[RMDB]
RNA sequence: GGGAACGACUCGAGUAGAGUCGAAAACUAGUGCCAUUCGUGGCACUAGAAGGGGUCCAGCCUGGAAAGGCUGGACGUAUUGGAAUGGUCGGGCCGCCAUUCAAGGUACGCUAUUCGUAGCGUACAAUUCACAUGGCAGAUUCGUCUGCCAUGUGAAAAAAGAAACAACAACAACAAC
Reactivity to DMS in 0.01 (KOAc 150mM, MgCl2 10mM, bicine 150mM(pH8.5), 24C), signal-to-noise 1, nucleotides 027 to 126: c000u010a000g020u000g000c020c000a050u000u000c250g050u000g000g030c010a010c000u000a020g000a090a170g010g000g010g010u000c000c000a010g010c020c000u000g000g010a110a220a020g000g040c020u000g000g000a010c040g000u000a020u000u000g010g010a020a020u000g010g020u000c080g010g000g030c010c080g000c000c020a010u000u000c050a140a090g000g020u020a000c010g000c000u000a050u000u010c190g020u000a010g010c000g000u000a000c000a070a130
Reactivity to 2A3 in 0.01 (KOAc 150mM, MgCl2 10mM, bicine 150mM(pH8.5), 24C), signal-to-noise 1, nucleotides 027 to 126: c000u000a000g000u010g050c000c040a050u040u080c260g080u070g000g050c010a000c000u000a000g000a010a010g040g000g030g020u040c000c010a000g030c010c020u100g140g110a170a080a020g000g000c000u000g010g000a000c030g000u060a120u020u270g120g010a010a010u010g000g060u010c020g000g060g000c060c060g000c000c000a000u010u000c000a010a030g140g020u000a000c010g010c000u000a020u050u120c230g160u070a010g000c010g010u000a000c010a000a060